[RMDB]
This 177-nucleotide RNA was probed chemically with DMS and 2A3. For 2A3 the reverse transcriptase was SuperScript II with manganese. The DMS profile rests on 14,664 reads. 2A3 is a SHAPE reagent: it acylates the 2'-hydroxyl of flexible nucleotides of all four kinds. High DMS reactivity at an A or C suggests that its Watson-Crick edge is free.
RNA sequence: GGGAACGACUCGAGUAGAGUCGAAAACAUAUUGAUCCGCUACCAGUCACGGUUUACCCAGCAUCCAUGACUUACAUCAGGCGAGGCACCAUAAAACAUAUCCGACUUAGGAAUUAUCUGUCUGGGGCUACCAGUUAUGAUUCGUCAUAACUGGUAGAAAAGAAACAACAACAACAAC
Reactivity to DMS in 0.01 (KOAc 150mM, MgCl2 10mM, bicine 150mM(pH8.5), 24C), signal-to-noise 9, nucleotides 027 to 126: c090a090u010a120u010u010g010a100u010c050c030g010c060u000a090c130c100a060g020u000c030a050c060g010g010u000u000u010a100c020c000c010a060g010c100a090u000c020c020a060u000g010a040c020u000u010a100c170a090u010c110a060g000g000c080g000a070g010g010c040a070c050c030a060u010a050a050a070a080c140a080u010a090u000c040c020g020a070c160u010u010a060g010g000a060a080u000u010a050u000c090u000g000u010c020u000g010g000g000g000
Reactivity to 2A3 in 0.01 (KOAc 150mM, MgCl2 10mM, bicine 150mM(pH8.5), 24C), signal-to-noise 9, nucleotides 027 to 126: c030a030u180a130u130u200g070a080u050c020c010g000c040u040a070c040c070a020g010u010c000a010c030g020g000u020u030u080a080c010c000c000a000g010c010a020u010c010c000a020u040g020a040c000u040u120a050c020a180u110c040a040g030g020c020g050a100g050g020c030a040c030c020a040u130a090a140a030a030c050a050u120a080u070c020c020g060a080c240u110u130a030g030g030a040a030u160u060a060u140c060u040g110u030c010u010g000g020g020g010